[RMDB]
RNA sequence: GGGAACGACUCGAGUAGAGUCGAAAACCAUUGACACACCCAAAUUUAGGCACGUCAAAUCGGCUAUACAUUGAUAAAUUUUUAGUUAAAGUACUUACAAAUAUACUUGCCUUCAAAUUCUCAAUUAUCACUAAUGUUGGUUCGCCAACAUUAGUGAAAAAGAAACAACAACAACAAC
Reactivity to DMS in 0.01 (KOAc 150mM, MgCl2 10mM, bicine 150mM(pH8.5), 24C), signal-to-noise 2, nucleotides 027 to 126: c060c010a140u010u020g010a040c070a180c170a110c050c020c030a070a110a150u040u030u010a070g030g030c120a180c100g000u000c050a000a020a130u020c100g000g000c050u000a080u010a030c070a050u010u000g010a020u010a080a000a030u010u000u020u010u000a040g040u000u000a070a080a070g000u000a030c140u020u010a100c150a030a070a080u030a180u000a000c000u000u020g000c170c000u000u010c080a010a020a050u050u020c160u000c020a020a060u030u030a060
Reactivity to 2A3 in 0.01 (KOAc 150mM, MgCl2 10mM, bicine 150mM(pH8.5), 24C), signal-to-noise 7, nucleotides 027 to 126: c000c010a020u000u130g040a010c020a000c000a020c030c000c020a060a130a110u160u190u110a080g020g010c030a010c100g010u010c000a020a050a070u090c020g020g000c010u030a030u030a130c040a060u040u060g040a050u160a090a140a150u100u070u020u030u060a030g030u020u100a130a060a010g020u030a060c020u070u030a030c050a080a120a010u130a010u000a050c020u020u030g020c000c000u030u080c040a050a080a080u130u010c050u010c030a030a120u130u070a110

Structure probing data (DMS and 2A3) for a 177-nucleotide construct. Values cover nucleotides 27 to 126. 2A3 is a SHAPE reagent: it acylates the 2'-hydroxyl of flexible nucleotides of all four kinds. DMS adducts were read by reverse transcription with MarathonRT.